An RNA of 170 nucleotides, treated with 2A3 and DMS and read out base by base.
For 2A3 the reverse transcriptase was SuperScript II with manganese.
It was measured as part of the RMDB library 15KLIB.
The reactions ran in a buffer of 150 mM KOAc, 10 mM MgCl2 and 150 mM bicine (pH 8.5), at 24 C.

RNA sequence: GGGAACGACUCGAGUAGAGUCGAAAACCGCAUGGCAGAGACCGAGCCCCCUUCGGAAAAGGACCGGAGGAGGGAGCUAGGAGCGUGGGGGGGCCGGUGGAGCCAUGGGAUGCUCCUCCCGAUUCCGAAGGUAGUUUGUUCGCAAACUACAAAAGAAACAACAACAACAAC
Reactivity to 2A3 in 0.01 (KOAc 150mM, MgCl2 10mM, bicine 150mM(pH8.5), 24C), signal-to-noise 9, nucleotides 027 to 129: c010c010g070c070a010u010g010g000c040a020g090a030g070a280c000c010g000a050g010c000c000c000c000c000u050u150c080g090g030a060a080a060a070g120g040a080c030c020g010g020a020g020g020a040g020g020g000a010g010c030u090a040g030g050a040g010c040g040u230g040g020g000g000g000g000g000c000c000g010g000u030g030g080a030g000c000c000a010u010g000g000g000a020u160g010c010u000c010c000u010c000c000c010g020a070u090u000c010c000g030a060a010g110
Reactivity to DMS in 0.01 (KOAc 150mM, MgCl2 10mM, bicine 150mM(pH8.5), 24C), signal-to-noise 9, nucleotides 027 to 129: c030c000g030c010a000u000g010g040c020a090g000a260g010a060c040c000g000a080g000c020c010c000c010c010u030u000c070g010g010a080a080a090a100g030g020a110c020c020g000g000a060g030g010a170g010g000g010a030g000c140u030a060g010g000a000g030c050g050u040g000g000g000g000g000g070g010c000c020g040g000u030g030g030a180g000c040c010a040u000g010g000g020a070u020g000c020u000c020c040u000c040c010c000g010a280u030u010c010c010g000a140a110g020